[RMDB]
RNA sequence: GGGAACGACUCGAGUAGAGUCGAAAAGAUAUGGACGUUAUGACUGGCGAAGAACUCGGAAACGAGGGAGCCACAUACUGCGUCCUAAGUCAAAAGCAUGUAACCUCGUUCGCGAGGUUACAUGCAAGAAUACUCCAGACUUCGGUCUGGAGUAUUCAAAAGAAACAACAACAACAAC
Reactivity to 2A3 in 0.01 (KOAc 150mM, MgCl2 10mM, bicine 150mM(pH8.5), 24C), signal-to-noise 1, nucleotides 027 to 126: g010a010u100a050u110g010g010a000c020g000u090u030a030u040g130a290c140u060g000g040c030g140a300a040g000a070a040c000u010c010g030g000a090a050a020c000g000a010g000g000g000a000g030c020c020a000c000a010u070a010c040u070g030c000g000u000c000c000u020a100a030g010u000c040a000a000a020a170g000c000a000u000g010u000a000a020c000c020u000c000g020u090u140c290g030c000g150a000g000g010u020u000a000c010a000u000g000c000a000a000
Reactivity to DMS in 0.01 (KOAc 150mM, MgCl2 10mM, bicine 150mM(pH8.5), 24C), signal-to-noise 3, nucleotides 027 to 126: g000a020u010a300u010g000g000a000c000g000u000u000a010u000g010a150c270u000g010g020c000g000a080a190g010a160a170c020u010c010g010g010a110a130a160c020g040a020g000g030g000a070g000c000c000a030c020a010u000a020c300u000g000c010g000u000c000c020u000a040a120g010u000c050a070a100a090a150g000c000a000u000g000u000a000a000c000c000u000c000g020u010u020c240g010c000g000a010g000g010u000u000a000c000a000u000g010c000a030a010
Overview:
This 177-nucleotide RNA was probed chemically with 2A3 and DMS. 2A3 adducts were read by reverse transcription with SuperScript II with manganese. For DMS, 1,923 sequencing reads were counted. The RNA was probed in 150 mM KOAc, 10 mM MgCl2 and 150 mM bicine (pH 8.5) at 24 C. Reactivities are given for positions 27 through 126.